[RMDB]
RNA sequence: GGGAACGACUCGAGUAGAGUCGAAAAAGACCUUACGAGGUCAAAAUGAUGAUUUCUUUCCCCGUCCGACACGACUGUGAUUGACAAGAUAAGAUUUAAUAUUUUAUUAAGCCAAAAACUCUGAUAACAGAUUAGAAGACUUCGGUCUUCUAAUCUGAAAAGAAACAACAACAACAAC
Reactivity to 2A3 in 0.01 (KOAc 150mM, MgCl2 10mM, bicine 150mM(pH8.5), 24C), signal-to-noise 1, nucleotides 027 to 126: a000g010a010c010c000u050u010a040c150g140a040g000g000u000c040a040a030a020a040u060g040a000u000g000a010u150u100u000c030u010u040u000c000c020c000c000g040u000c030c000g060a070c010a000c080g180a030c020u070g030u010g090a090u050u010g020a010c010a010a000g000a020u030a070a000g000a000u000u010u080a170a060u130a230u240u040u050u010a060u010u010a020a000g050c000c000a000a130a000a030a160c070u110c030u080g030a020u040a180a000